[RMDB]
RNA sequence: GGGAACGACUCGAGUAGAGUCGAAAACGGGGUCAUCGUAGGCUGCGAGUUGAUGCUACGCUUUGUGGCCGUGGGUCUCAUCGUCGGCACCGCUUUCAUAUCCCGGGGGGCAUGUGCGAUCACAUACCUCUCGAAAAUUCUUCGGAAUUUUCGAGAGAAAAGAAACAACAACAACAAC
Reactivity to DMS in 0.01 (KOAc 150mM, MgCl2 10mM, bicine 150mM(pH8.5), 24C), signal-to-noise 1, nucleotides 027 to 126: c030g000g000g020g010u000c010a100u010c060g030u010a070g030g020c000u000g010c030g010a110g030u010u030g020a140u010g000c010u010a030c050g020c280u010u000u010g020u010g020g000c010c030g030u000g010g010g000u000c020u010c130a100u010c050g000u000c110g010g020c020a050c030c030g000c030u010u000u000c050a090u010a110u010c010c030c000g000g000g020g000g000g020c100a040u000g000u000g000c180g000a130u010c020a050c020a080u000a070c060
Reactivity to 2A3 in 0.01 (KOAc 150mM, MgCl2 10mM, bicine 150mM(pH8.5), 24C), signal-to-noise 1, nucleotides 027 to 126: c000g000g040g000g000u010c010a050u030c070g050u080a070g010g100c010u010g020c030g010a080g020u070u110g270a120u140g070c040u040a030c010g010c030u120u100u260g040u030g000g020c040c090g030u000g050g010g000u020c030u000c010a130u050c000g050u040c140g000g030c000a000c020c000g000c020u000u060u060c100a120u140a140u170c030c000c000g040g010g000g090g020g000c040a000u060g000u000g020c140g120a220u300c020a010c030a060u070a090c010

The record gives the reactivity of an RNA of 177 nucleotides to DMS and 2A3.
For 2A3 the reverse transcriptase was SuperScript II with manganese.
The 2A3 profile rests on 709 reads.
The RNA was probed in 150 mM KOAc, 10 mM MgCl2 and 150 mM bicine (pH 8.5) at 24 C.